Chemical mapping of a 177-nucleotide RNA with 2A3 and DMS. For DMS the reverse transcriptase was MarathonRT. Conditions: 150 mM KOAc, 10 mM MgCl2 and 150 mM bicine (pH 8.5), 24 C. It was measured as part of the RMDB libraries RFM100 and RFMREP.
RNA sequence: GGGAACGACUCGAGUAGAGUCGAAAAAAUCAAGGCUUGUUUCUCGACAUUCGCAGUUGCCGCCUAAGAGCUUUCGCCCUGCCAGGCUUGAGAGGUAGUGCUGCCAAAUCCUUCCUUGGAUGUCUGAAUUGCAGCACUAAUUCGUUAGUGCUGCAAUAAAAGAAACAACAACAACAAC
Reactivity to 2A3 in 0.01 (KOAc 150mM, MgCl2 10mM, bicine 150mM(pH8.5), 24C), signal-to-noise 4, nucleotides 027 to 126: a010a010u180c140a070a060g080g000c100u040u050g010u010u040u000c040u030c040g020a020c000a060u030u040c050g000c020a010g040u210u200g110c000c030g010c000c000u050a080a020g010a010g010c000u030u090u160c090g020c050c040c000u060g040c040c020a010g000g010c000u020u040g080a210g010a030g080g000u030a030g000u030g050c000u010g010c000c030a010a120a100u050c010c020u070u030c000c020u000u060g000g000a000u000g000u000c030u050g040a060
Reactivity to DMS in 0.01 (KOAc 150mM, MgCl2 10mM, bicine 150mM(pH8.5), 24C), signal-to-noise 3, nucleotides 027 to 126: a050a030u030c160a070a070g010g010c140u000u010g000u010u000u000c010u000c050g010a080c090a030u000u010c090g030c060a060g000u010u020g030c020c020g020c020c000u020a050a300g010a090g010c020u000u000u020c060g000c020c020c010u010g000c050c110a090g040g020c010u000u010g020a150g040a070g020g000u000a040g020u020g000c020u010g010c040c140a040a060a090u010c030c020u000u010c020c030u000u010g000g000a020u010g000u010c030u020g000a100